RNA sequence: GGGAACGACUCGAGUAGAGUCGAAAACAAUGUCUUUAUGUCUGAAGCUAAAUGCUGGGUGGAAACCGAUCUGAAGAAAGGGCCACAUGAAUUCUGUUCACAGCAUACGCUUUAUAUUAAGGAUGGCCACGGGUGUACUUCGGUACACCCAAAAGAAACAACAACAACAAC
Reactivity to 2A3 in 0.01 (KOAc 150mM, MgCl2 10mM, bicine 150mM(pH8.5), 24C), signal-to-noise 8, nucleotides 027 to 129: c050a040a090u200g010u020c000u020u050u050a030u060g080u020c070u040g020a000a000g020c020u050a260a300a020u000g000c000u010g050g050g010u000g010g030a110a110a060c000c000g020a020u020c030u180g140a130a100g020a040a150a010g030g020g070c000c000a010c010a040u100g050a030a030u130u080c100u200g080u020u020c030a040c010a060g000c000a000u040a040c030g000c000u030u000u020a040u010a010u030u030a010a000g010g000a010u020g050g050c030c020a030c070
Reactivity to DMS in 0.01 (KOAc 150mM, MgCl2 10mM, bicine 150mM(pH8.5), 24C), signal-to-noise 5, nucleotides 027 to 129: c170a150a130u060g110u010c010u130u070u000a020u040g020u050c300u030g020a040a040g000c010u020a090a240a100u030g010c060u000g020g030g070u030g000g100a050a090a050c050c000g000a110u030c060u050g070a100a110g040a010a030a130g000g040g050c120c020a010c050a000u040g040a000a100u000u110c160u000g010u010u050c000a180c030a020g040c000a030u010a100c020g030c050u030u030u000a030u010a030u060u010a010a090g020g020a040u020g020g020c030c080a130c080